[RMDB]
This 177-nucleotide RNA was probed chemically with 2A3 and DMS. The reactions ran in a buffer of 150 mM KOAc, 10 mM MgCl2 and 150 mM bicine (pH 8.5), at 24 C. For DMS the reverse transcriptase was MarathonRT. It was measured as part of the RMDB library OK2TST. The DMS profile rests on 2,855 reads. The 2A3 profile rests on 2,428 reads. Reactivities are rounded to 0.1 and cut off at 0 and 3.

RNA sequence: GGGAACGACUCGAGUAGAGUCGAAAAAGCAACCACAGAUCUUGCUGUGCAUCUCGCGGCGGAUCGUAAGCAUGACGCACAAGUGAAAUUUGGUAUUACCUUGGCGGCGAGUGUGGUCAGCAUGGCAGCUGGGGUAAUUAUUCGUAAUUACCCCAGCAAAAGAAACAACAACAACAAC
Reactivity to 2A3 in 0.01 (KOAc 150mM, MgCl2 10mM, bicine 150mM(pH8.5), 24C), signal-to-noise 3, nucleotides 027 to 126: a000g050c020a010a020c010c000a010c030a060g050a080u000c000u170u300g000c020u030g030u040g040c010a140u030c090u100c120g000c010g050g000c010g050g000a020u010c020g020u010a020a020g040c020a030u130g050a030c020g030c030a080c000a230a030g050u030g180a090a090a130u170u120u100g130g030u120a060u070u040a060c020c000u020u030g040g010c000g000g000c010g030a050g030u060g020u070g040g050u040c010a010g000c040a040u050g090g000c050a060
Reactivity to DMS in 0.01 (KOAc 150mM, MgCl2 10mM, bicine 150mM(pH8.5), 24C), signal-to-noise 3, nucleotides 027 to 126: a130g010c070a270a060c010c030a040c090a120g010a030u010c010u000u000g040c000u010g020u000g000c170a190u010c130u020c050g020c020g000g030c040g010g000a020u000c020g000u000a060a130g020c050a100u000g000a100c070g000c030a080c040a020a030g020u010g010a080a060a120u000u000u020g020g000u010a060u000u010a050c180c010u000u000g030g020c040g000g010c020g000a120g010u000g020u010g000g010u010c100a110g000c020a070u000g010g000c110a130